[RMDB]
This 207-nucleotide RNA was probed chemically with 2A3. The 2A3 profile rests on 659 reads. The data come from the RNA Mapping Database (RMDB), library OK3TST.
RNA sequence: GGGAACGACUCGAGUAGAGUCGAAAAAGAAGGAGCAGAAUAUGAUGAUAUGUGGGAUGUUAGAGAAAUCCCAGAGUAAGUCAAAUGAAGCCAGGAAUGUCUUUAGGAGUUUAAGUUAGCUGUGUCAUCUGAUAACAUUUUACUUUUUACAAGAUUACCGACUGACUAAUUUCGAUUAGUCAGUCGGAAAAGAAACAACAACAACAAC
Reactivity to 2A3 in 0.01 (KOAc 150mM, MgCl2 10mM, bicine 150mM(pH8.5), 24C), signal-to-noise 2, nucleotides 027 to 156: a000g080a050a020g050g040a060g000c030a020g040a130a080u170a090u170g000a010u020g020a050u040a080u130g110u090g020g000g000a020u020g020u100u080a050g050a010g030a140a100a010u010c040c010c000a010g010a000g000u120a080a000g000u040c030a020a020a020u030g030a020a010g000c010c010a010g010g060a080a000u010g000u020c000u010u040u040a030g020g010a060g000u030u260u120a060a040g020u070u060a000g000c040u030g000u040g030u090c020a090u010c030u040g040a050u030a210a010c010a060u030u140u100u060a030c000u150u140u000u030u040a060c110a070a020g060a120u160u170a020